Source: RMDB library RNAMAK, as collected in RNAgym. An RNA of 207 nucleotides, treated with 2A3 and read out base by base. 2A3 adducts were read by reverse transcription with SuperScript II with manganese. High 2A3 reactivity points to a flexible backbone, as in loops and unpaired stretches.
RNA sequence: GGGAACGACUCGAGUAGAGUCGAAAAAACGCUGGGACACCUCGUCCUAAGACAGAGAAUGACAUGGUGAACUGAAGCGCGCACGGUUCACCAACAGCAUUCUUCGAGGACGGAGGUGUCCUGUGCUGAAGCGCGCACGGCAACCGAAAGGUGCGAACGAUAGUGUGGUCUUCGGACCACACUAUCGAAAAGAAACAACAACAACAAC
Reactivity to 2A3 in 0.01 (KOAc 150mM, MgCl2 10mM, bicine 150mM(pH8.5), 24C), signal-to-noise 2, nucleotides 027 to 156: a000a010c020g020c010u010g000g000g000a000c000a000c000c000u000c010g010u010c000c010u080a210a000g010a000c000a000g010a000g030a020a000u020g050a070c230a290u300g000g000u000g000a000a000c000u010g020a180a060g040c010g010c000g000c010a010c030g000g000u020u000c020a010c000c010a020a000c010a020g010c000a000u000u010c020u000u020c010g010a000g020g000a000c090g230g040a040g000g020u000g000u000c000c000u000g000u000g000c020u010g020a080a040g000c000g000c010g000c010a000c010g000g000c010a020a000c010c010g080a090a010a040g030g010u020g000c000g000a190a030